[RMDB]
RNA sequence: GGGAACGACUCGAGUAGAGUCGAAAAGACGCGAACCCGUGAGUGGAAACCUCGUUCUUUAUUGGGGAGUACACUCGAGGAGUGGAAGGCGGGGAGGGCGGGGAGGAGUGUUACCCCACGGGAACUGACAGCUUGUUGUUCGCAACAAGCAAAAGAAACAACAACAACAAC
Reactivity to 2A3 in 0.01 (KOAc 150mM, MgCl2 10mM, bicine 150mM(pH8.5), 24C), signal-to-noise 8, nucleotides 027 to 129: g050a000c050g000c020g080a060a060c000c000c020g040u110g020a010g000u070g000g000a060a040a040c000c020u090c080g090u210u130c130u140u300u170a240u090u170g000g000g000g000a010g010u010a000c010a000c000u000c010g020a050g000g010a050g010u110g030g060a090a020g020g020c050g000g010g000g070a180g020g040g030c080g010g000g000g000a020g010g010a060g000u060g030u020u060a100c000c000c000c020a020c030g020g000g010a060a020c030u060g070a030c030a030
Reactivity to DMS in 0.01 (KOAc 150mM, MgCl2 10mM, bicine 150mM(pH8.5), 24C), signal-to-noise 4, nucleotides 027 to 129: g010a120c100g040c100g050a080a080c080c020c020g070u040g020a010g050u040g000g000a070a210a130c030c040u020c090g040u060u030c160u080u110u060a100u100u060g070g080g050g000a050g030u040a100c030a010c000u010c010g020a100g030g030a080g030u050g020g020a000a000g030g020c160g030g080g030g050a120g060g000g060c100g060g030g010g050a070g010g040a210g020u040g030u050u060a080c030c000c010c110a090c160g000g000g000a060a060c040u030g000a120c000a150